The record gives the reactivity of an RNA of 177 nucleotides to 2A3 and DMS. For DMS the reverse transcriptase was MarathonRT. Conditions: 150 mM KOAc, 10 mM MgCl2 and 150 mM bicine (pH 8.5), 24 C. The DMS profile rests on 6,667 reads. The 2A3 profile rests on 5,719 reads. For 2A3 the reverse transcriptase was SuperScript II with manganese.
RNA sequence: GGGAACGACUCGAGUAGAGUCGAAAAGAUAUGGAGUAGGGUAGCUCCUUGGACCUUGGGUCGGAAACGACCCAAGCUAGGAGCUACCUACUCCUAAGUCAAACAAGUUUCCUUCGGGAAACUUGAAUCAAAACUAUAGGUUCGCCUAUAGUUUUGAAAAAGAAACAACAACAACAAC
Reactivity to 2A3 in 0.01 (KOAc 150mM, MgCl2 10mM, bicine 150mM(pH8.5), 24C), signal-to-noise 2, nucleotides 027 to 126: g040a010u090a050u160g000g020a030g030u060a110g190g210g200u060a020g000c000u010c020c060u000u050g110g090a140c000c030u000u000g020g000g000u010c020g060g020a140a100a070c020g000a000c060c010c000a010a000g030c000u010a000g000g020a010g000c000u010a010c010c000u010a000c000u010c000c000u000a000a000g000u000c030a000a030a080c000a000a010g000u000u000u000c000c000u010u060c300g090g000g020a000a000a000c000u000u000g010a000a060
Reactivity to DMS in 0.01 (KOAc 150mM, MgCl2 10mM, bicine 150mM(pH8.5), 24C), signal-to-noise 5, nucleotides 027 to 126: g000a040u010a300u010g000g000a020g020u000a020g020g020g020u010a010g010c000u010c000c010u000u010g030g000a150c300c010u000u010g000g010g010u000c000g000g000a120a130a230c010g010a000c000c000c000a000a000g000c040u000a020g020g000a030g010c000u000a000c000c000u000a000c000u000c000c000u000a010a060g000u010c030a150a170a300c010a010a010g000u000u000u000c000c000u000u020c270g030g000g000a000a000a000c000u000u000g010a070a120